[RMDB]
RNA sequence: GGGAACGACUCGAGUAGAGUCGAAAAAUGCGUGGCGCUGACAUUGAAGCCGUCAGCCGCACCGCUGCGGAACCACAACUCAAUCUCAUCGGCGACCUUCUCUGGCGUCCCGGCAAUAAAGCGGUUGGCAUUAGGUAUACUUCGGUAUACCUAAUGCAAAAGAAACAACAACAACAAC
Reactivity to DMS in 0.01 (KOAc 150mM, MgCl2 10mM, bicine 150mM(pH8.5), 24C), signal-to-noise 4, nucleotides 027 to 126: a060u020g030c000g000u010g000g010c010g020c000u010g010a030c040a090u020u040g020a220a170g000c300c080g000u010c000a020g000c090c030g010c000a030c050c000g020c010u010g030c050g000g000a090a100c040c050a050c090a130a100c040u010c070a120a070u010c020u000c040a070u010c040g010g010c010g010a070c050c040u000u030c030u010c020u010g000g000c040g020u030c030c010c000g010g000c090a100a070u070a010a110a090g010c040g010g010u030u010g010
Reactivity to 2A3 in 0.01 (KOAc 150mM, MgCl2 10mM, bicine 150mM(pH8.5), 24C), signal-to-noise 9, nucleotides 027 to 126: a000u150g010c040g040u090g030g000c020g010c020u010g010a010c020a080u150u240g160a130a010g080c070c040g010u010c000a010g010c060c040g000c000a030c010c020g010c020u050g020c040g040g020a040a060c020c010a030c020a060a080c020u050c070a040a120u040c020u020c060a090u050c030g040g010c020g040a100c000c010u100u100c030u010c020u060g050g000c010g020u020c000c010c010g040g000c050a060a110u150a240a100a040g070c050g060g020u040u040g070